The data come from the RNA Mapping Database (RMDB), library VIROID.
This 207-nucleotide RNA was probed chemically with DMS and 2A3.
For DMS, 2,625 sequencing reads were counted.
The RNA was probed in 150 mM KOAc, 10 mM MgCl2 and 150 mM bicine (pH 8.5) at 24 C.
2A3 adducts were read by reverse transcription with SuperScript II with manganese.
[RMDB]
RNA sequence: GGGAACGACUCGAGUAGAGUCGAAAAGAGUAGAUGUAGUCGCAUACUCCAAUGACUUGGGGUCACUGUGUAAACGUACUACAGAUCUACGGCCAUGUGACUGGCGGGGAGCUGGACCCUCUCACCACUCAGGUAGUGUUGAAGGUCGCGAGGGAGUUCUUGAGUAGGAGUUCGCUCCUACUCAAGAAAAAGAAACAACAACAACAAC
Reactivity to DMS in 0.01 (KOAc 150mM, MgCl2 10mM, bicine 150mM(pH8.5), 24C), signal-to-noise 1, nucleotides 027 to 156: g000a150g060u000a010g020a130u000g010u000a000g030u010c020g000c010a030u020a000c000u000c010c000a010a020u000g030a040c040u000u010g080g080g060g050u000c000a030c000u000g010u000g010u000a020a300a040c020g030u020a060c010u000a050c000a000g000a230u000c010u010a030c030g020g020c020c010a110u000g040u000g070a140c090u000g040g010c030g020g010g000g050a130g040c060u000g000g000a040c030c010c020u000c010u000c010a050c040c010a080c010u000c150a190g030g000u000a070g010u020g010u020u020g010a020a050g020g020u010c050g000c020g000a090g010g010g010a170g020u010
Reactivity to 2A3 in 0.01 (KOAc 150mM, MgCl2 10mM, bicine 150mM(pH8.5), 24C), signal-to-noise 3, nucleotides 027 to 156: g150a020g000u020a000g000a020u020g000u000a000g010u000c010g010c010a010u110a240c000u000c010c020a070a040u260g280a170c160u040u020g000g000g000g010u000c000a000c020u010g000u000g000u030a000a020a010c120g100u030a040c000u000a000c020a010g100a120u000c000u010a000c000g010g030c020c010a140u200g080u170g120a080c100u020g060g020c000g010g000g000g000a060g020c100u070g070g020a030c020c010c000u010c000u000c000a070c090c010a010c010u040c050a040g220g230u200a000g120u000g050u020u030g020a140a030g010g000u040c020g000c020g050a050g010g030g000a070g020u010